[RMDB]
RNA sequence: GGGAACGACUCGAGUAGAGUCGAAAAUACGAUAUACUUAUUGUUAAUUUCAUUGACCUUUACGCAAUCCUGCGUAAAUGCUGGUAUAGGGUGUACUUCGGAUUUCCGAGCCUAUAUUGGUUUUGAAUUCAGUCCGUCUUUUCGAAGACGGACUGAAAAAAGAAACAACAACAACAAC
Reactivity to 2A3 in 0.01 (KOAc 150mM, MgCl2 10mM, bicine 150mM(pH8.5), 24C), signal-to-noise 1, nucleotides 027 to 126: u120a000c000g020a000u070a010u050a140c150u090u050a020u190u150g000u020u080a260a220u050u000u090c170a200u000u010g150a080c000c000u020u000u000a000c000g020c000a090a180u260c050c250u150g020c000g000u010a000a000a000u070g000c040u010g000g050u000a000u000a000g000g030g060u060g110u020a070c070u000u050c000g170g000a220u210u130u100c000c000g010a010g080c000c000u010a000u000a020u000u040g000g050u010u000u030u190g240a020a020
An RNA of 177 nucleotides, treated with 2A3 and read out base by base. For 2A3 the reverse transcriptase was SuperScript II with manganese. For 2A3, 332 sequencing reads were counted.